RNA sequence: GGGAACGACUCGAGUAGAGUCGAAAAAAUAAUUAUGUACCCUCAUAUGUUAAACCUGAUAGUGUGUCUACCAGCGAUUUAGGUAGUCUCAUUGAUUGUAAUGCGGCUUCAGUUAACCAAAUUGUCUACGUAUGAGAAAGUUCGCUUUCUCAUACGUAAAAGAAACAACAACAACAAC
Reactivity to DMS in 0.01 (KOAc 150mM, MgCl2 10mM, bicine 150mM(pH8.5), 24C), signal-to-noise 1, nucleotides 027 to 126: a080a050u000a050a080u000u000a030u010g000u000a110c070c060c020u010c080a080u020a060u010g010u000u000a040a040a060c100c000u000g000a050u000a050g070u010g000u000g020u000c030u000a030c020c030a140g010c190g000a120u000u020u000a080g020g020u000a020g000u000c000u000c030a030u020u000g000a100u000u030g050u000a050a020u000g020c140g010g000c020u000u000c060a070g020u000u010a070a140c050c060a050a080a020u000u000g000u010c090u000
Reactivity to 2A3 in 0.01 (KOAc 150mM, MgCl2 10mM, bicine 150mM(pH8.5), 24C), signal-to-noise 2, nucleotides 027 to 126: a000a000u140a000a020u100u080a050u090g030u120a110c020c030c000u010c020a020u050a010u120g050u070u100a020a100a080c010c030u020g040a060u060a120g060u060g030u040g020u090c030u000a020c010c010a010g000c080g090a090u000u050u170a030g000g000u010a010g010u000c000u010c010a020u030u030g090a070u020u150g030u180a020a020u040g010c010g020g000c020u050u050c000a050g000u060u040a020a000c030c000a100a020a050u040u060g020u010c000u020